[RMDB]
RNA sequence: GGGAACGACUCGAGUAGAGUCGAAAAGCAGCCUCUAUGACAACACGUCCAUCUCCACAGCCCAGGUCGUAGAACACAUCGUCGGGGCCAACGCGUGCUAUCCUCAUUACGUGUUUUAGUAGCUCGCUCAUCCAUCCCACUUCGGUGGGAUGGAUGAAAAAGAAACAACAACAACAAC
Reactivity to 2A3 in 0.01 (KOAc 150mM, MgCl2 10mM, bicine 150mM(pH8.5), 24C), signal-to-noise 3, nucleotides 027 to 126: g020c030a010g040c000c000u000c010u040a070u120g090a050c090a100a010c020a070c050g040u010c000c020a060u000c030u020c070c020a110c050a060g030c010c000c010a010g020g050u020c010g040u040a060g050a210a010c060a000c020a140u070c050g040u010c020g030g000g000g000c000c010a050a040c030g040c020g030u040g020c000u040a080u130c020c040u050c010a030u040u140a040c090g030u060g070u010u090u010u050a040g020u010a010g010c040u040c020g040c010
Reactivity to DMS in 0.01 (KOAc 150mM, MgCl2 10mM, bicine 150mM(pH8.5), 24C), signal-to-noise 2, nucleotides 027 to 126: g030c100a110g020c030c000u000c080u000a060u020g000a080c180a030a060c090a070c000g010u000c080c060a090u000c040u000c010c020a120c110a120g000c030c010c000a070g000g010u000c000g020u030a050g010a170a060c130a080c070a000u030c090g000u000c080g050g000g050g030c030c020a050a020c110g000c120g100u000g030c070u010a020u010c010c020u000c070a040u000u000a010c060g020u000g000u000u040u020u000a210g020u010a140g000c000u000c110g050c070